[RMDB]
RNA sequence: GGGAACGACUCGAGUAGAGUCGAAAAUACAUUUUUAAGACCCUUAGUUAUUUUGCUUUACCGCCCAGGAUGGGGUGCAGCGUUCCUGCAAUAUCCAGGGCACCUAGGUGCAGCCUUGUAGUUUUAGUAUAUCUACAUAUCUUCGGAUAUGUAGAAACAUAUACUCGAUGUUCGCAUCGAGUAUAUGAAAAGAAACAACAACAACAAC
Reactivity to DMS in 0.01 (KOAc 150mM, MgCl2 10mM, bicine 150mM(pH8.5), 24C), signal-to-noise 1, nucleotides 027 to 156: u000a160c050a100u000u060u000u020u040a050a260g000a120c030c020c040u000u000a150g030u010u000a110u020u010u000u000g010c050u000u010u000a070c040c060g060c040c030c000a140g020g010a090u000g030g110g010g030u010g000c050a040g040c130g010u000u010c090c010u000g000c110a020a120u000a080u000c040c000a050g000g000g030c020a060c100c040u010a040g030g000u000g030c040a090g000c020c060u020u000g020u010a140g000u000u000u000u080a120g010u000a170u000a140u010c000u000a010c000a020u000a010u000c000u000u010c300g030g000a020u010a010u000g030u030a000g010a010a030a140
Reactivity to 2A3 in 0.01 (KOAc 150mM, MgCl2 10mM, bicine 150mM(pH8.5), 24C), signal-to-noise 1, nucleotides 027 to 156: u070a030c020a090u030u020u000u130u220a100a000g050a040c010c000c000u060u070a050g020u100u000a100u130u220u140u080g000c030u090u050u090a030c000c040g030c000c000c000a010g050g000a010u080g030g060g040g030u030g030c000a000g000c010g070u130u070c010c010u020g000c000a010a030u010a020u140c020c000a000g000g000g000c000a000c000c010u010a080g000g050u050g080c020a010g060c000c130u040u080g080u080a130g020u040u060u030u080a060g040u030a090u020a010u090c000u000a000c000a000u000a000u000c000u010u020c110g070g000a000u000a000u000g000u010a000g000a000a000a000

Conditions: 150 mM KOAc, 10 mM MgCl2 and 150 mM bicine (pH 8.5), 24 C. Structure probing data (DMS and 2A3) for a 207-nucleotide construct. Values are in units of 0.01, from 0 to 300, in steps of 10. For DMS the reverse transcriptase was MarathonRT. 2A3 adducts were read by reverse transcription with SuperScript II with manganese.